[RMDB]
RNA sequence: GGGAACGACUCGAGUAGAGUCGAAAACAGUUCCAGACGACGCCACAGCACGGGGUUGUCGGCGGACUGGGUGAAAUGGCAGCCGAUAGCGGCUAGCUGUCGGCUGCGGUCAACCUCGAUCAUGAUGCGUACGUUAUUCUUUCGAGAAUAACGUACGAAAAGAAACAACAACAACAAC
Reactivity to DMS in 0.01 (KOAc 150mM, MgCl2 10mM, bicine 150mM(pH8.5), 24C), signal-to-noise 5, nucleotides 027 to 126: c060a040g010u020u020c010c010a170g000a080c020g000a000c010g010c020c010a130c120a140g030c260a140c210g000g020g000g010u000u020g040u000c030g020g030c220g000g000a020c020u000g000g000g040u010g000a040a080a070u010g010g000c000a010g000c000c000g000a020u000a000g010c000g000g010c180u050a050g010c000u000g010u000c000g000g010c000u000g000c000g010g000u010c050a190a110c030c020u010c060g000a090u030c070a050u000g010a100u020g000
Reactivity to 2A3 in 0.01 (KOAc 150mM, MgCl2 10mM, bicine 150mM(pH8.5), 24C), signal-to-noise 9, nucleotides 027 to 126: c020a020g030u100u050c010c010a020g020a020c010g000a000c010g130c080c010a170c040a120g160c100a080c210g040g000g010g000u080u200g020u020c010g020g010c090g020g000a020c010u020g000g010g050u080g050a070a080a100u180g170g000c000a000g000c000c000g000a000u010a000g010c040g170g120c150u100a050g000c000u000g000u000c000g000g000c000u000g000c000g000g000u020c000a030a030c000c010u030c040g060a100u080c060a130u170g140a080u170g100
Conditions: 150 mM KOAc, 10 mM MgCl2 and 150 mM bicine (pH 8.5), 24 C.
Structure probing data (DMS and 2A3) for a 177-nucleotide construct.
2A3 adducts were read by reverse transcription with SuperScript II with manganese.
The 2A3 profile rests on 11,050 reads.
The DMS profile rests on 11,265 reads.